[RMDB]
RNA sequence: GGGAACGACUCGAGUAGAGUCGAAAACCAUUAUUUCAGACUUAAAAACAAGCAUGUUUUCAAAUGGCACUAUGAGCUGCCAAUGAUGUAUCACCACCAUAUCUCAUUAUUCUCCAGUAAAUGUGAUCCAACCAAUAAGGUUCGCCUUAUUGGUUGGAAAAGAAACAACAACAACAAC
Reactivity to 2A3 in 0.01 (KOAc 150mM, MgCl2 10mM, bicine 150mM(pH8.5), 24C), signal-to-noise 1, nucleotides 027 to 126: c000c010a000u030u090a070u020u180u130c000a010g020a020c030u060u080a020a050a010a140a060c010a050a010g110c070a070u060g050u000u080u100u130c010a030a140a140u060g010g030c000a000c070u020a170u240g070a070g090c140u000g010c000c000a000a030u070g010a000u030g070u060a040u060c000a010c070c000a000c000c000a020u010a060u040c020u020c010a060u000u120a050u170u010c090u160c020c010a070g110u230a060a100a130u100g040u120g010a020u000